RNA sequence: GGGAACGACUCGAGUAGAGUCGAAAAGGUAACUGUAGGCAAUUGGGGAGUGACUGGAGGAUAUAGGUCACUGGGGCCAUGACUUUGGAGUUUAUAUUUUGUCCCUGGUGAGCAGAGAGAGCUCUGCUAUUGCUAUAUCGUUCGCGAUAUAGCAAUAAAAAGAAACAACAACAACAAC
Reactivity to 2A3 in 0.01 (KOAc 150mM, MgCl2 10mM, bicine 150mM(pH8.5), 24C), signal-to-noise 4, nucleotides 027 to 126: g040g000u060a060a040c040u060g080u120a030g050g030c050a100a130u100u080g030g010g000g010a050g020u050g020a070c040u040g030g040a030g040g000a030u070a020u060a250g070g020u030c000a000c020u020g010g000g010g010c030c030a030u040g040a020c040u110u070u150g100g010a060g010u050u170u020a190u020a060u070u180u110u070g020u030c030c000c000u010g060g000u050g030a020g000c010a000g010a000g010a010g000a020g050c020u010c000u020g010c000
Reactivity to DMS in 0.01 (KOAc 150mM, MgCl2 10mM, bicine 150mM(pH8.5), 24C), signal-to-noise 9, nucleotides 027 to 126: g000g010u010a060a080c070u010g000u000a060g000g010c070a070a100u000u000g000g000g000g010a080g020u000g000a070c070u000g000g020a100g010g010a090u000a080u010a100g010g010u000c020a030c030u000g010g010g010g020c050c050a050u000g000a050c080u000u000u010g010g010a060g010u000u000u010a090u010a130u030u000u000u000g000u000c000c010c010u000g000g010u000g000a100g010c010a020g000a050g010a230g000a160g010c030u000c020u000g010c030

The record gives the reactivity of an RNA of 177 nucleotides to 2A3 and DMS. The reactions ran in a buffer of 150 mM KOAc, 10 mM MgCl2 and 150 mM bicine (pH 8.5), at 24 C. It was measured as part of the RMDB library OK2TRN. Values cover nucleotides 27 to 126.